RNA sequence: GGGAACGACUCGAGUAGAGUCGAAAAGAUAUGGAACCCUGUACAGGGAGAAGUGUCGGAAACGACCUUCGAAGAACUGUACUGUACGGGUUCCUAAGUCAAAUCCAACGCGUUCGCGCGUUGGAAAUCAAUCAAUGAGGUUCGCCUCAUUGAUUGAAAAAGAAACAACAACAACAAC
Reactivity to DMS in 0.01 (KOAc 150mM, MgCl2 10mM, bicine 150mM(pH8.5), 24C), signal-to-noise 3, nucleotides 027 to 126: g020a010u000a070u010g000g000a020a010c000c000c010u010g000u000a000c010a010g030g010g020a210g010a010a000g000u020g040u000c000g010g000a040a030a030c000g010a010c000c010u000u000c000g000a110a090g020a110a110c240u010g010u010a210c000u000g020u010a010c050g000g000g010u000u000c000c000u000a000a050g000u000c010a060a120a170u000c000c000a000a000c000g020c000g020u000u020c220g020c010g030c000g000u000u000g010g000a020a030a040
Reactivity to 2A3 in 0.01 (KOAc 150mM, MgCl2 10mM, bicine 150mM(pH8.5), 24C), signal-to-noise 3, nucleotides 027 to 126: g000a000u030a020u070g000g000a010a000c010c000c020u030g010u010a010c020a020g300g180g060a030g010a010a020g100u260g010u240c000g020g000a020a000a000c000g010a000c000c010u000u010c040g000a100a050g050a140a050c140u210g110u300a060c010u000g000u030a030c000g000g000g000u000u000c000c000u010a000a000g000u010c000a030a010a150u030c000c000a000a000c000g020c010g030u050u120c270g000c000g000c000g140u000u000g010g000a010a010a020

Record summary:
Chemical mapping of a 177-nucleotide RNA with DMS and 2A3. Values are in units of 0.01, from 0 to 300, in steps of 10. 2A3 adducts were read by reverse transcription with SuperScript II with manganese. Conditions: 150 mM KOAc, 10 mM MgCl2 and 150 mM bicine (pH 8.5), 24 C. The data come from the RNA Mapping Database (RMDB), library TTRDEL. DMS adducts were read by reverse transcription with MarathonRT.